An RNA of 177 nucleotides, treated with 2A3 and DMS and read out base by base. The reactions ran in a buffer of 150 mM KOAc, 10 mM MgCl2 and 150 mM bicine (pH 8.5), at 24 C.
RNA sequence: GGGAACGACUCGAGUAGAGUCGAAAACACUGUGACUGUAGAUUGGUGCUCUGUGACAGCACAGUGGAGCACUGUGACAACAAAGUGGAACACUCUGAAACAUAAGUGGAGCAAUGUGACACUACAAGCCAUACCAUUAGUUCGCUAAUGGUAUGGCAAAAGAAACAACAACAACAAC
Reactivity to 2A3 in 0.01 (KOAc 150mM, MgCl2 10mM, bicine 150mM(pH8.5), 24C), signal-to-noise 3, nucleotides 027 to 126: c000a000c000u000g060u030g300a270c000u010g000u070a000g030a110u040u070g050g010u060g000c010u000c020u070g300u070g100a010c000a020g000c000a020c010a020g020u010g090g000a010g000c030a010c030u060g050u200g170a000c020a080a000c020a040a270a010g010u010g000g010a010a010c020a000c010u000c000u050g080a050a270a040c070a130u230a180a050g050u100g090g000a010g000c010a050a060u090g010u030g000a010c000a010c020u130a040c050a120a010
Reactivity to DMS in 0.01 (KOAc 150mM, MgCl2 10mM, bicine 150mM(pH8.5), 24C), signal-to-noise 3, nucleotides 027 to 126: c010a020c020u000g010u000g020a170c030u000g000u000a030g000a110u000u000g020g020u000g010c150u000c040u010g010u020g010a070c040a050g030c020a000c000a040g010u010g010g020a120g010c060a030c020u000g010u020g040a090c180a090a080c080a060a070a080g020u000g000g000a160a130c040a060c040u000c090u000g010a100a090a080c160a080u050a060a080g010u010g000g000a170g000c090a030a080u000g010u000g000a260c040a020c050u000a080c170a080a100